[RMDB]
RNA sequence: GGGAACGACUCGAGUAGAGUCGAAAAACACCAGUGCUACGGCACUGGUGAAAUAGAGUCUUGUGUUGUCUUGCUUAAAGGCCAUCCAACCUAGAGUCUAUACCAGCCACCAGUACGCUGGUGGCAAAUGCAGAUCCUAUUUCGAUAGGAUCUGCAUAAAAGAAACAACAACAACAAC
Reactivity to 2A3 in 0.01 (KOAc 150mM, MgCl2 10mM, bicine 150mM(pH8.5), 24C), signal-to-noise 5, nucleotides 027 to 126: a000c010a000c000c000a000g000u000g010c000u020a060c230g140g000c000a000c000u010g000g000u000g000a000a000a000u020a010g020a020g120u000c000u000u130g020u040g010u080u000g020u020c020u030u040g010c000u070u200a170a080a030g060g000c020c030a010u030c010c000a000a010c000c000u020a010g000a020g100u000c000u020a030u030a070c000c010a020g000c010c000a000c000c000a010g010u030a020c210g050c120u010g000g000u000g000g000c000a020a020
Reactivity to DMS in 0.01 (KOAc 150mM, MgCl2 10mM, bicine 150mM(pH8.5), 24C), signal-to-noise 2, nucleotides 027 to 126: a160c020a010c020c000a030g050u000g010c000u010a090c200g050g020c000a020c000u000g000g020u010g000a000a060a010u000a020g020a020g000u000c010u010u000g000u040g010u000u000g010u000c110u000u010g000c020u010u030a080a110a120g000g000c080c060a060u000c090c020a010a000c010c000u010a020g000a020g010u000c010u000a010u000a180c010c040a140g000c000c000a010c030c000a030g020u020a090c270g010c010u000g000g010u000g000g020c010a000a010
Chemical mapping of a 177-nucleotide RNA with 2A3 and DMS. The RNA was probed in 150 mM KOAc, 10 mM MgCl2 and 150 mM bicine (pH 8.5) at 24 C. For 2A3 the reverse transcriptase was SuperScript II with manganese. Source: RMDB libraries RFM100 and RFMREP, as collected in RNAgym.